The record gives the reactivity of an RNA of 177 nucleotides to DMS and 2A3. Reactivities are rounded to 0.1 and cut off at 0 and 3. For DMS the reverse transcriptase was MarathonRT. The RNA was probed in 150 mM KOAc, 10 mM MgCl2 and 150 mM bicine (pH 8.5) at 24 C. The DMS profile rests on 879 reads. The data come from the RNA Mapping Database (RMDB), library M2PK50.

RNA sequence: GGGAACGACUCGAGUAGAGUCGAAAACCAUAACAGUUCGCUGUUAUGGACUGUCGGAAUGCGGAAUUAUUAAUCGUCCGCUUACGAUUAAUACCGACUAUAAAGCGUAACACUUCGGUGUUACGAAUCGCAUGCAUGUUUUCGAACAUGCAUGCGAAAAAGAAACAACAACAACAAC
Reactivity to DMS in 0.01 (KOAc 150mM, MgCl2 10mM, bicine 150mM(pH8.5), 24C), signal-to-noise 1, nucleotides 027 to 126: c000c000a040u010a000a020c020a020g000u000u000c180g020c000u000g000u000u000a000u000g040g000a050c110u000g000u000c000g000g000a070a040u000g040c030g010g000a080a080u000u000a100u000u000a000a040u020c140g010u000c100c050g000c040u000u000a040c020g000a020u000u000a060a040u000a180c000c000g000a020c080u000a160u020a080a050a080g030c000g000u020a000a000c000a000c000u000u010c200g010g000u010g000u000u010a000c040g000a000a010
Reactivity to 2A3 in 0.01 (KOAc 150mM, MgCl2 10mM, bicine 150mM(pH8.5), 24C), signal-to-noise 1, nucleotides 027 to 126: c000c000a000u020a000a000c000a000g000u020u040c110g030c130u010g000u020u000a000u020g000g010a070c040u020g030u000c000g000g040a100a030u150g010c020g000g020a000a030u120u080a070u050u120a240a150u130c070g030u000c010c010g000c050u020u020a010c010g000a000u000u060a050a020u040a080c000c000g020a000c020u030a070u110a300a040a010g050c000g000u000a000a000c010a000c000u040u020c130g100g000u000g000u020u000a010c000g000a020a070